This 177-nucleotide RNA was probed chemically with DMS and 2A3.
Source: RMDB library M2PK90, as collected in RNAgym.
The 2A3 profile rests on 800 reads.
For DMS the reverse transcriptase was MarathonRT.
2A3 adducts were read by reverse transcription with SuperScript II with manganese.

RNA sequence: GGGAACGACUCGAGUAGAGUCGAAAAGGAAAAUUUAAACUGGUGGGCCAGUGUCUAGGAUUGACGUUAGACACUCGUUUUUGCCCGUUUCAAACAGGUGAAUACAAACCGUCAUAAAAUAAAAAAACAUAAGAUUCAGGUUCGCCUGAAUCUUAUGAAAAGAAACAACAACAACAAC
Reactivity to DMS in 0.01 (KOAc 150mM, MgCl2 10mM, bicine 150mM(pH8.5), 24C), signal-to-noise 2, nucleotides 027 to 126: g030g000a060a040a090a030u010u000u000a030a100a110c110u020g010g020u000g020g000g000c050c170a010g010u000g000u030c000u020a000g000g010a290u010u010g010a050c080g000u010u000a000g020a040c000a000c020u000c220g010u000u000u000u000u000g020c010c010c000g030u000u000u000c250a090a120a050c040a050g000g000u000g000a040a050u020a130c060a070a050a060c110c000g020u010c020a020u000a090a040a070a080u040a040a020a050a050a070a060a130
Reactivity to 2A3 in 0.01 (KOAc 150mM, MgCl2 10mM, bicine 150mM(pH8.5), 24C), signal-to-noise 1, nucleotides 027 to 126: g020g000a040a110a090a140u170u150u110a080a120a020c080u040g010g010u040g010g010g030c030c010a000g000u000g000u000c000u000a020g070g140a250u200u140g130a140c070g000u050u020a000g000a000c000a000c010u000c000g080u020u040u050u050u190g020c000c000c000g000u010u070u040c160a160a090a040c020a080g150g070u000g080a070a020u180a130c060a010a130a050c030c000g030u030c020a010u100a120a100a110a040u220a040a170a000a040a000a000a000